Chemical mapping of a 177-nucleotide RNA with 2A3 and DMS.
The reactions ran in a buffer of 150 mM KOAc, 10 mM MgCl2 and 150 mM bicine (pH 8.5), at 24 C.
For 2A3, 871 sequencing reads were counted.
[RMDB]
RNA sequence: GGGAACGACUCGAGUAGAGUCGAAAAGAGCUGCAUGAUCCUAAAUUGUAUUCAGAUGCAGCUACAAUGGACUUUAGCAGUUCGGCGCGACAGUUGCCCAAAGCAUGGAGCCAAACCUUGCUAAUGGGAUCUGGGGACUAUUCGUAGUCCCCAGAUCAAAAGAAACAACAACAACAAC
Reactivity to 2A3 in 0.01 (KOAc 150mM, MgCl2 10mM, bicine 150mM(pH8.5), 24C), signal-to-noise 1, nucleotides 027 to 126: g040a010g010c010u010g030c020a070u030g020a120u140c000c030u120a120a210a170u240u210g130u120a100u080u120c040a000g000a190u010g000c010a000g000c000u010a020c000a000a090u110g080g040a040c000u100u060u090a040g080c040a040g020u140u020c010g000g000c060g000c000g020a040c040a060g080u220u210g120c020c030c020a050a040a020g020c010a000u040g010g090a000g020c030c030a030a020a080c000c020u020u090g070c030u070a090a010u140g010g100
Reactivity to DMS in 0.01 (KOAc 150mM, MgCl2 10mM, bicine 150mM(pH8.5), 24C), signal-to-noise 2, nucleotides 027 to 126: g070a080g020c000u010g000c000a030u000g000a090u000c050c030u000a100a120a140u000u010g000u000a190u040u000c050a080g030a130u000g000c000a000g020c070u000a030c200a110a110u000g000g040a080c030u000u000u000a030g000c010a070g000u000u000c030g000g000c020g000c140g000a050c070a060g000u000u010g040c010c000c100a050a150a170g010c020a030u010g010g000a300g010c160c080a020a090a040c040c020u000u000g000c000u020a030a080u000g000g000